[RMDB]
RNA sequence: GGGAACGACUCGAGUAGAGUCGAAAACAUGUGAAGUGCAUGGUAAUGGUAGUAUGAUAGAGGAUAUUGAUUAUGUACCCCUAAAAUCUGCAGUCUGUAUUACAGCUUGUAAUUUAGGGGGCGCUGUCACGUAUGGAAAGUUCGCUUUCCAUACGUGAAAAGAAACAACAACAACAAC
Reactivity to 2A3 in 0.01 (KOAc 150mM, MgCl2 10mM, bicine 150mM(pH8.5), 24C), signal-to-noise 3, nucleotides 027 to 126: c030a030u080g020u040g140a140a080g030u010g060c010a010u030g020g030u110a080a020u070g020g070u010a020g010u020a040u050g060a030u030a080g060a020g010g050a030u020a060u070u090g060a040u060u150a050u180g080u200a210c000c000c000c010u020a000a000a010a080u070c070u050g000c010a000g000u010c020u020g040u020a170u110u300a050c000a000g000c000u010u020g000u010a020a020u010u000u020a000g000g010g000g030g000c010g020c010u030g040u050
Reactivity to DMS in 0.01 (KOAc 150mM, MgCl2 10mM, bicine 150mM(pH8.5), 24C), signal-to-noise 1, nucleotides 027 to 126: c050a050u010g030u010g020a090a080g000u010g010c060a000u000g000g020u000a040a110u000g010g030u000a030g000u000a020u020g010a080u000a060g000a100g010g010a080u000a090u000u010g020a090u000u020a040u000g020u000a140c010c000c020c000u000a010a000a030a030u000c180u000g010c000a010g020u000c020u010g000u000a130u020u010a050c010a000g030c020u000u010g000u000a030a020u010u010u000a090g000g020g010g010g000c060g020c070u010g000u010

Source information
An RNA of 177 nucleotides, treated with 2A3 and DMS and read out base by base. The RNA was probed in 150 mM KOAc, 10 mM MgCl2 and 150 mM bicine (pH 8.5) at 24 C. The 2A3 profile rests on 2,282 reads. It was measured as part of the RMDB library 15KREP. For DMS the reverse transcriptase was MarathonRT.